[RMDB]
RNA sequence: GGGAACGACUCGAGUAGAGUCGAAAAGAUAUGGAGGGAGCGAUAAGCUGGUGUCGGAAACGACACCCAGCUUUUGACGCUCCGCUCCUAAGUCAAAGAUCCAUCCAAGUUCGCUUGGAUGGAUCAAGUCAAUGAUAUUGUUCGCAAUAUCAUUGACAAAAGAAACAACAACAACAAC
Reactivity to 2A3 in 0.01 (KOAc 150mM, MgCl2 10mM, bicine 150mM(pH8.5), 24C), signal-to-noise 6, nucleotides 027 to 126: g010a010u040a010u070g000g000a000g000g000g000a000g000c010g040a090u050a300a030g000c010u000g020g000u000g010u000c000g020g010a040a020a020c010g000a000c010a010c010c020c010a000g000c000u060u060u050u090g030a010c010g010c000u000c010c000g070c000u000c000c000u010a040a020g010u000c030a060a050a170g000a000u000c000c000a000u000c000c000a020a000g020u050u160c250g110c200u000u000g000g010a000u000g000g000a000u000c000a000a000
Reactivity to DMS in 0.01 (KOAc 150mM, MgCl2 10mM, bicine 150mM(pH8.5), 24C), signal-to-noise 9, nucleotides 027 to 126: g010a030u000a170u010g000g010a020g000g000g000a010g020c000g010a080u010a020a020g030c000u000g000g010u000g000u000c000g020g000a050a030a090c000g010a010c000a000c300c250c090a000g000c000u000u000u000u000g010a240c040g000c000u000c000c000g010c000u000c000c000u000a010a070g000u000c020a090a120a160g000a010u000c000c000a000u000c000c000a010a010g000u000u010c240g010c000u000u000g010g000a010u000g000g000a000u000c000a010a050